This 207-nucleotide RNA was probed chemically with 2A3 and DMS. The reactions ran in a buffer of 150 mM KOAc, 10 mM MgCl2 and 150 mM bicine (pH 8.5), at 24 C. For 2A3 the reverse transcriptase was SuperScript II with manganese. It was measured as part of the RMDB library PDB130. Reactivities are given for positions 27 through 156.
RNA sequence: GGGAACGACUCGAGUAGAGUCGAAAAAAUGAUCGCUCAGUGGUUAAGGAUGUGUCGUCGCAUAGACAGCCAGGAGGUUGGCUUAGAAGCAGCCACCCUUCAAAGAGUGCGUAAUAGCUCACUGGUCGAGUGACGAUGCGCCGAAAAUGAUCGGGGCCUUGAUAUCCUUGUUCGCAAGGAUAUCAAGAAAAGAAACAACAACAACAAC
Reactivity to 2A3 in 0.01 (KOAc 150mM, MgCl2 10mM, bicine 150mM(pH8.5), 24C), signal-to-noise 4, nucleotides 027 to 156: a000a030u270g020a060u080c050g000c010u040c040a070g050u100g110g030u080u050a070a040g040g050a180u050g020u000g010u020c010g010u010c010g000c010a020u060a130g040a050c030a040g040c030c020a010g000g000a000g000g020u000u030g010g000c000u020u040a080g010a170a000g060c040a000g000c000c000a000c000c000c000u000u000c000a020a030a000g020a000g000u080g010c020g030u090a100a050u040a130g010c010u010c020a020c030u040g070g000u090c040g030a020g030u020g020a010c000g010a000u010g010c010g010c000c000g020a050a040a000a050u120g010a030u030c030g000g000g000g000c000
Reactivity to DMS in 0.01 (KOAc 150mM, MgCl2 10mM, bicine 150mM(pH8.5), 24C), signal-to-noise 1, nucleotides 027 to 156: a090a090u030g010a060u000c000g040c030u000c010a060g050u000g000g000u000u000a090a130g030g030a070u000g000u000g050u010c000g030u010c030g020c050a200u020a160g000a140c200a030g010c040c040a040g030g000a040g000g000u000u010g000g040c030u010u000a200g010a190a280g030c050a110g000c030c000a000c020c010c000u000u000c020a060a010a130g030a150g010u000g000c030g020u000a040a120u000a290g000c010u000c010a030c000u000g000g050u000c020g000a130g000u010g000a020c080g010a050u000g010c000g000c030c000g020a030a070a090a100u000g110a080u010c000g000g000g020g000c080